[RMDB]
The record gives the reactivity of an RNA of 207 nucleotides to 2A3 and DMS. For DMS, 3,865 sequencing reads were counted. DMS adducts were read by reverse transcription with MarathonRT.
RNA sequence: GGGAACGACUCGAGUAGAGUCGAAAACCGUAGGUUGAUGAAAUUCCUUGGACCUACAGUGACUCACCUUCGAAAGAGGGUGAGCAAUGCUGUAGCUAGGAAUAACCAACCUAAACGGAAAGAUCUCUUGAACUUCUUCGGAAGUUCAAGAGAUCAACUUAUAUCCAGUCUUCGGACUGGAUAUAAGAAAAGAAACAACAACAACAAC
Reactivity to 2A3 in 0.01 (KOAc 150mM, MgCl2 10mM, bicine 150mM(pH8.5), 24C), signal-to-noise 4, nucleotides 027 to 156: c000c000g020u020a010g010g010u000u010g000a090u080g040a170a180a180u050u010c030c010u090u140g130g140a230c020c000u000a010c000a000g000u020g250a090c000u000c000a000c010c010u000u000c010g060a100a060a060g000a010g000g020g010u000g000a000g000c010a000a060u070g010c000u000g000u010a010g000c000u020a000g000g010a010a010u020a030a020c010c010a000a000c010c000u020a120a160a000c040g030g030a130a090a050g010a030u010c000u000c000u000u000g000a000a000c000u000u010c030u050u090c270g110g010a000a010g000u000u000c000a000a010g000a000g000a000u000c000a000a000
Reactivity to DMS in 0.01 (KOAc 150mM, MgCl2 10mM, bicine 150mM(pH8.5), 24C), signal-to-noise 2, nucleotides 027 to 156: c010c000g020u000a040g040g010u010u000g000a020u000g000a210a290a140u000u000c000c010u000u010g080g020a130c190c000u010a000c000a020g000u000g000a180c000u000c010a010c020c010u000u000c020g000a150a190a300g000a020g030g000g020u010g010a000g010c030a050a040u020g060c000u000g030u000a000g010c030u000a030g020g030a040a030u000a110a040c010c000a020a020c010c010u000a000a070a120c040g000g000a110a090a170g000a040u000c020u000c000u000u000g010a040a010c000u000u000c010u000u000c300g040g000a010a020g040u000u000c000a000a010g000a010g000a000u000c000a000a040